[RMDB]
RNA sequence: GGGAACGACUCGAGUAGAGUCGAAAAUGGAGGUCCGCGAGACCCGACGCGAAGCCCUCGCGAUGCGCUGGAUCAUCGAUGCCGCCAGGGGAAGAGAGGGCAAGCCGAUGGAAUACCGGCUUGCCGAUGGUGCCUCUAUGUUCGCAUAGAGGCACCAAAAAGAAACAACAACAACAAC
Reactivity to DMS in 0.01 (KOAc 150mM, MgCl2 10mM, bicine 150mM(pH8.5), 24C), signal-to-noise 2, nucleotides 027 to 126: u010g000g020a050g000g000u000c060c100g050c050g010a230g000a130c060c010c000g050a070c020g030c030g000a080a280g010c060c130c120u000c080g020c040g000a110u000g020c090g000c040u000g000g010a080u000c020a060u010c090g000a060u010g020c000c010g050c000c030a090g000g000g000g020a130a030g000a120g020a130g010g060g000c010a000a010g000c000c010g000a010u000g000g040a170a070u020a050c070c020g000g000c000u000u000g000c020c000g000a020